[RMDB]
RNA sequence: GGGAACGACUCGAGUAGAGUCGAAAACCUUGGUCCUUCGGGACCAAGGAAACCCGAAGACAUACAGACUGAGGGCGGCGAGACAAUCCACAAGAGUCGCUAAAAGCGUCUGGUUCGCCAGACGCAAGAUAAUUAACCUCUUCGGAGGUUAAUUAUCAAAAGAAACAACAACAACAAC
Reactivity to 2A3 in 0.01 (KOAc 150mM, MgCl2 10mM, bicine 150mM(pH8.5), 24C), signal-to-noise 2, nucleotides 027 to 126: c000c000u000u000g000g000u020c000c020u030u030c220g140g000g010a000c010c000a000a000g000g000a040a040a000c000c000c010g010a060a020g110a020c060a050u300a070c070a040g160a080c040u070g050a100g010g050g010c030g000g020c040g020a050g020a040c080a090a090u040c060c020a030c020a070a130g030a030g110u050c020g000c020u030a030a050a090a070g000c000g020u000c000u000g020g030u020u070c210g030c020c000a000g000a010c000g000c000a000a000
Reactivity to DMS in 0.01 (KOAc 150mM, MgCl2 10mM, bicine 150mM(pH8.5), 24C), signal-to-noise 3, nucleotides 027 to 126: c000c000u010u000g000g020u000c010c010u000u010c210g030g030g020a010c000c010a000a000g000g000a020a080a100c010c010c010g010a140a110g000a110c070a070u000a100c200a080g000a100c070u010g010a170g010g000g020c060g000g000c060g000a120g000a070c050a070a100u000c050c040a070c100a060a150g010a200g010u010c020g000c020u000a040a050a120a140g010c000g010u000c010u000g000g010u000u010c180g010c000c000a000g000a000c010g000c000a020a010
An RNA of 177 nucleotides, treated with 2A3 and DMS and read out base by base. Source: RMDB library M2PK50, as collected in RNAgym.